[RMDB]
The record gives the reactivity of an RNA of 207 nucleotides to DMS and 2A3. The 2A3 profile rests on 3,831 reads. 2A3 adducts were read by reverse transcription with SuperScript II with manganese. For DMS, 2,441 sequencing reads were counted. Values are in units of 0.01, from 0 to 300, in steps of 10. The RNA was probed in 150 mM KOAc, 10 mM MgCl2 and 150 mM bicine (pH 8.5) at 24 C. It was measured as part of the RMDB library RNAMAK. DMS adducts were read by reverse transcription with MarathonRT.
RNA sequence: GGGAACGACUCGAGUAGAGUCGAAAACGUCGAUCUAUUCGUAGAUCGACGAAAAAGAUAUGGACAUAGAUGGGAGAUGUGGGUCGGAAACGACCCAAACAUCGAAGAACAUCUGAUGUCCUAAGUCAAAAAAUGCAUGACGUUCGCGUCAUGCAAAGUAAUGACUGAUCUUCGGAUCAGUCAUUACAAAAGAAACAACAACAACAAC
Reactivity to DMS in 0.01 (KOAc 150mM, MgCl2 10mM, bicine 150mM(pH8.5), 24C), signal-to-noise 1, nucleotides 027 to 156: c040g010u000c000g010a040u010c010u030a090u000u000c240g070u010a010g010a010u000c000g010a040c050g000a000a000a020a060a050g010a030u010a020u010g010g010a050c010a030u000a030g010a060u000g000g020g010a120g030a000u020g040u000g020g030g010u000c000g030g010a030a000a050c010g040a010c000c010c000a000a000a100c000a000u010c000g000a120a190g010a170a230c000a010u010c020u010g020a060u000g000u010c000c000u000a000a050g020u000c010a000a020a190a070a120a130u000g010c000a010u000g010a040c010g030u000u010c300g030c090g050u020c010a010u010g010c000a000a010a080
Reactivity to 2A3 in 0.01 (KOAc 150mM, MgCl2 10mM, bicine 150mM(pH8.5), 24C), signal-to-noise 3, nucleotides 027 to 156: c000g020u000c000g000a000u010c000u020a040u080u090c230g070u040a000g000a010u000c000g000a000c000g010a020a020a000a010a000g010a000u010a000u030g010g000a000c000a000u040a010g000a010u000g010g030g020a090g010a020u000g010u000g020g010g000u000c010g000g000a040a000a000c000g010a000c010c040c110a010a020a010c000a000u000c000g030a080a010g040a000a010c010a000u000c000u080g140a080u050g010u010c000c000u010a000a000g010u010c010a000a000a000a170a000a060u090g000c000a000u000g000a000c010g030u060u030c250g030c020g110u010c000a000u000g000c000a000a010a000